Structure probing data (DMS and 2A3) for a 207-nucleotide construct. The reactions ran in a buffer of 150 mM KOAc, 10 mM MgCl2 and 150 mM bicine (pH 8.5), at 24 C. Reactivities are given for positions 27 through 156.

RNA sequence: GGGAACGACUCGAGUAGAGUCGAAAAAUCAUUUUAUGGACUUGAACGGGUUUACAUCGUCAGAUUGUAUAUCAGAACCGGAAGCUUUGUAUAGAAGAGCGCACGUUAUUAAAAUAACGCGUGGUAAUACAGAUCAUUUUUCGCAAGUAUUAGAGUAUCUCAGUCUUUCAUUCGUGAAAGACUGAGAAAAAGAAACAACAACAACAAC
Reactivity to DMS in 0.01 (KOAc 150mM, MgCl2 10mM, bicine 150mM(pH8.5), 24C), signal-to-noise 1, nucleotides 027 to 156: a110u020c070a110u010u040u010u010a200u000g050g020a130c080u000u000g010a060a100c020g010g000g070u000u000u000a080c040a060u010c000g060u000c150a080g010a120u010u010g080u000a020u000a070u000c050a100g010a120a120c010c050g000g000a080a160g020c070u000u000u010g000u000a170u000a120g040a130a080g010a170g030c030g030c040a020c000g050u010u000a000u040u020a150a160a210a200u000a000a050c020g010c000g010u000g000g020u000a120a050u000a020c020a120g000a100u050c080a130u010u000u010u020u000c050g060c100a050a120g010u000a060u000u000a080g000a190g000u010a040
Reactivity to 2A3 in 0.01 (KOAc 150mM, MgCl2 10mM, bicine 150mM(pH8.5), 24C), signal-to-noise 1, nucleotides 027 to 156: a000u060c010a010u020u000u060u300a160u070g050g030a020c040u020u150g060a110a020c130g080g000g000u040u020u060a050c040a030u040c090g090u050c010a010g030a070u000u060g070u010a010u000a030u130c090a070g090a050a040c000c000g040g010a000a000g010c010u090u160u160g130u060a160u090a040g090a200a040g040a000g040c000g000c010a010c060g030u000u030a030u080u110a120a050a100a030u040a040a000c010g000c030g040u010g010g020u120a050a050u010a070c030a010g040a010u100c070a070u030u080u030u000u080c040g010c000a010a020g100u010a090u040u120a060g010a000g060u010a030
The 2A3 profile rests on 471 reads.